[RMDB]
RNA sequence: GGGAACGACUCGAGUAGAGUCGAAAAUGAAUGCUGAAGACCAUGAUGAGGGAUGUAAGAGAACUCUGUAUGGUGUUCACAGAGGACUCCAGAGAGGGAAGGGCUGGUUCUAGCUGGGAAGGUGAACGACAGUUAGUAGUUUCGACUACUAACUGUCAAAAGAAACAACAACAACAAC
Reactivity to 2A3 in 0.01 (KOAc 150mM, MgCl2 10mM, bicine 150mM(pH8.5), 24C), signal-to-noise 4, nucleotides 027 to 126: u100g060a060a030u090g010c060u020g030a050a010g050a030c010c010a030u060g020a060u070g010a080g020g010g020a030u060g090u250a180a050g060a030g000a150a010c010u000c020u020g060u130a050u070g060g030u070g160u090u070c030a010c000a010g060a040g010g050a020c010u000c020c020a030g070a000g010a040g100g040g040a050a040g060g010g000c050u050g060g000u070u050c060u090a040g000c010u040g020g000g030a080a050g040g020u090g060a040a030c090
Reactivity to DMS in 0.01 (KOAc 150mM, MgCl2 10mM, bicine 150mM(pH8.5), 24C), signal-to-noise 7, nucleotides 027 to 126: u010g010a090a080u000g010c110u010g010a080a070g010a100c030c030a050u000g010a120u010g010a080g000g010g000a150u000g010u010a120a170g000a060g010a190a240c010u000c000u000g020u010a050u000g010g010u010g000u000u000c060a050c050a040g000a070g000g010a140c020u000c020c050a080g000a110g000a080g000g000g000a070a090g000g000g000c060u000g000g000u000u010c050u000a070g000c080u000g010g000g000a070a050g000g010u000g010a060a100c240